RNA sequence: GGGAACGACUCGAGUAGAGUCGAAAAAUGGGACCCACAAACCUCUCUAGAUUCCGAUAGAGAAUCGAGAGAAAAGUGGCUCUCCCUUAGCCAUCCGAGUGGACGUACGUCCUCCUUCGGAUGCCCAGUACAAUAGUUGCUUCGGCAACUAUUGUACAAAAGAAACAACAACAACAAC
Reactivity to DMS in 0.01 (KOAc 150mM, MgCl2 10mM, bicine 150mM(pH8.5), 24C), signal-to-noise 2, nucleotides 027 to 126: a110u010g020g000g030a070c200c000c000a020c020a040a180a210c300c040u000c010u000c000u010a110g000a010u000u000c000c010g020a190u000a090g000a140g020a010a000u000c000g000a040g020a000g000a010a020a080a270g020u000g000g000c000u000c070u010c000c000c000u000u000a070g010c300c020a000u000c000c000g000a010g000u000g000g000a020c000g020u000a050c260g000u010c000c000u000c060c130u000u000c010g000g000a020u000g000c030c020c000a160
Reactivity to 2A3 in 0.01 (KOAc 150mM, MgCl2 10mM, bicine 150mM(pH8.5), 24C), signal-to-noise 2, nucleotides 027 to 126: a020u050g000g000g010a000c020c090c020a030c020a000a110a000c000c000u010c010u030c020u110a120g000a000u010u000c030c030g220a300u170a220g250a030g000a070a000u010c010g000a000g000a000g000a010a020a010a040g010u000g020g000c000u010c010u000c000c000c000u000u010a070g060c030c010a010u000c000c000g010a000g000u010g010g020a030c050g080u300a050c190g010u060c000c000u000c010c030u130u060c010g010g000a000u010g030c000c000c010a000